[RMDB]
The record gives the reactivity of an RNA of 207 nucleotides to 2A3 and DMS.
It was measured as part of the RMDB library PDB130.
Reactivities are given for positions 27 through 156.
The reactions ran in a buffer of 150 mM KOAc, 10 mM MgCl2 and 150 mM bicine (pH 8.5), at 24 C.

RNA sequence: GGGAACGACUCGAGUAGAGUCGAAAAAGGAAUGUGUAACAACUCACCUGCCGAAGUGCGCAGCUCCGAAAAUGGAUGGUGCCCAAGUCAGUGUGUCUCCCUUACAGUCUGCCAUCGAUGUGGCAGCCAAGGCAGAGCAUCGUUGUGUAGAAAGGGCGUAUAAUACAUUGUUCGCAAUGUAUUAUACAAAAGAAACAACAACAACAAC
Reactivity to 2A3 in 0.01 (KOAc 150mM, MgCl2 10mM, bicine 150mM(pH8.5), 24C), signal-to-noise 8, nucleotides 027 to 156: a000g110g010a100a080u090g030u040g030u160a120a050c040a030a050c030u010c040a050c010c010u010g010c020c020g070a140a040g050u060g050c050g000c040a030g020c040u020c020c020g090a090a100a020a070u160g030g010a030u050g030g040u060g000c000c010c000a030a020g040u050c030a030g010u020g020u020g110u140c020u040c020c000c000u010u050a080c050a070g060u010c010u000g000c000c000a030u020c050g120a090u220g010u040g050g030c010a000g000c000c010a060a020g060g000c030a010g010a010g050c010a020u040c030g010u010u040g020u010g020u060a020g060a070a090a030g020g030g000c020
Reactivity to DMS in 0.01 (KOAc 150mM, MgCl2 10mM, bicine 150mM(pH8.5), 24C), signal-to-noise 5, nucleotides 027 to 156: a100g010g010a050a050u000g030u000g010u000a080a110c040a060a120c040u000c000a090c040c010u000g020c020c020g010a070a140g020u000g010c080g030c040a120g010c060u000c000c010g010a060a060a110a110u000g000g010a100u010g000g020u000g010c010c010c020a050a270g010u000c040a080g050u010g030u000g010u000c010u000c020c000c000u000u000a070c070a090g030u000c010u010g010c010c010a050u000c060g020a120u010g030u000g010g000c010a050g010c020c070a060a070g060g020c070a060g010a300g020c010a040u000c030g010u000u010g000u000g020u000a060g010a080a080a070g000g050g020c160